[RMDB]
RNA sequence: GGGAACGACUCGAGUAGAGUCGAAAACUGCAGCUUCACUCCUGAGCCAGCGAGACCACGAACCCACCAGAAGGAAGAAACUCCAGACACAUCCGAAACAUCAGAAGGAACAAACUCCAGAUGCGCCACCUUAAGAGCUGUAGCACUCACCGCGAGAACCUCAUAUGAUCUUCGGAUCAUAUGAGGUAAAAGAAACAACAACAACAAC
Reactivity to 2A3 in 0.01 (KOAc 150mM, MgCl2 10mM, bicine 150mM(pH8.5), 24C), signal-to-noise 3, nucleotides 027 to 156: c020u010g020c040a040g010c000u080u080c050a080c090u070c010c020u060g030a020g050c030c000a020g030c030g000a000g030a060c010c030a040c130g040a020a060c030c000c000a060c030c030a050g040a090a010g100g020a000a080g060a050a130a020c010u010c050c030a040g020a050c020a010c000a100u030c010c050g050a050a130a010c030a030u130c030a040g070a170a040g060g050a080a060c040a040a070a050c030u000c030c010a040g020a090u120g040c050g000c000c000a040c000c020u050u100a080a020g000a020g010c010u010g010u060a010g000c020a020c020u040c010a080c020c040g020c020g070a030g010a100
Reactivity to DMS in 0.01 (KOAc 150mM, MgCl2 10mM, bicine 150mM(pH8.5), 24C), signal-to-noise 1, nucleotides 027 to 156: c030u010g020c090a060g040c020u000u020c060a120c020u000c000c050u010g020a150g060c060c050a050g000c000g020a180g010a170c030c010a090c100g010a110a180c060c000c020a140c120c000a080g030a090a090g010g000a060a100g020a070a110a110c040u010c000c030a130g000a200c050a030c030a090u000c010c030g020a130a060a070c030a060u010c040a060g010a120a110g000g010a080a110c030a040a060a060c170u000c020c000a090g030a050u000g040c010g040c000c000a020c040c030u000u010a070a150g000a060g000c050u040g000u000a100g010c030a020c000u000c010a090c030c010g000c030g030a130g000a070
Background:
Chemical mapping of a 207-nucleotide RNA with 2A3 and DMS. 2A3 adducts were read by reverse transcription with SuperScript II with manganese. Source: RMDB library OK3TST, as collected in RNAgym.